An RNA of 177 nucleotides, treated with DMS and 2A3 and read out base by base. The reactions ran in a buffer of 150 mM KOAc, 10 mM MgCl2 and 150 mM bicine (pH 8.5), at 24 C.

[RMDB]
RNA sequence: GGGAACGACUCGAGUAGAGUCGAAAAGAUAUGGAUGCCAAGGUGGGAGCUUAUCGGAAACGAUGAAGCAUCGAUCACUGGCAUCCUAAGUCAAAGACAAGCUAACGGUUCGCCGUUAGCUUGUCAACUUUUUAUGAUCCUUCGGGAUCAUAAAAAGAAAAGAAACAACAACAACAAC
Reactivity to DMS in 0.01 (KOAc 150mM, MgCl2 10mM, bicine 150mM(pH8.5), 24C), signal-to-noise 3, nucleotides 027 to 126: g000a050u010a270u010g000g000a000u010g000c000c000a020a040g030g010u000g000g010g020a060g000c000u000u000a040u000c010g000g000a130a040a160c000g010a010u000g000a020a030g010c000a090u010c040g000a120u000c010a050c060u000g000g010c000a010u000c000c000u000a010a050g000u000c020a140a100a120g000a010c010a000a000g000c000u000a000a000c000g010g010u000u000c190g050c020c000g020u000u000a000g000c000u000u000g000u000c000a010a040
Reactivity to 2A3 in 0.01 (KOAc 150mM, MgCl2 10mM, bicine 150mM(pH8.5), 24C), signal-to-noise 1, nucleotides 027 to 126: g020a020u050a010u050g000g000a010u000g000c010c020a100a110g300g050u080g040g160g000a000g000c010u040u010a000u010c010g010g050a060a040a000c030g000a020u080g240a030a030g010c030a180u120c040g130a080u110c000a010c100u000g000g000c000a010u010c000c000u010a000a000g020u020c040a110a090a020g000a000c010a020a010g020c000u000a010a000c020g000g080u060u160c300g000c110c000g000u000u000a000g000c020u000u000g000u010c000a000a000
As a SHAPE reagent, 2A3 marks flexible, mostly unpaired nucleotides at the ribose 2'-OH.